[RMDB]
RNA sequence: GGGAACGACUCGAGUAGAGUCGAAAACUGAUAUUUACUAAUUGGUUUGCCGAAUUGCUUACGCUCAGUGACAUAAUCUAAUGUGGCACGUAAAGCGCCAGCCAUACCACCUGUAGCCAUAUAAGCAUGUUCGACAGCUGUUCGCAGCUGUCGAACAAAAAGAAACAACAACAACAAC
Reactivity to 2A3 in 0.01 (KOAc 150mM, MgCl2 10mM, bicine 150mM(pH8.5), 24C), signal-to-noise 1, nucleotides 027 to 126: c000u080g030a000u010a130u250u100u150a090c080u180a100a170u090u090g080g080u030u070u060g150c000c030g000a140a130u050u030g020c030u040u000a040c140g030c010u040c230a080g000u080g130a010c000a030u100a010a070u150c100u080a150a150u140g000u000g000g000c000a000c000g050u210a280a000a000g090c000g000c010c000a000g000c030c000a010u060a050c000c000a000c000c080u010g010u050a010g000c040c000a000u000a000u000a130a010g050c140a090
The record gives the reactivity of an RNA of 177 nucleotides to 2A3. Conditions: 150 mM KOAc, 10 mM MgCl2 and 150 mM bicine (pH 8.5), 24 C. 2A3 is a SHAPE reagent: it acylates the 2'-hydroxyl of flexible nucleotides of all four kinds. The 2A3 profile rests on 397 reads. Reactivities are given for positions 27 through 126.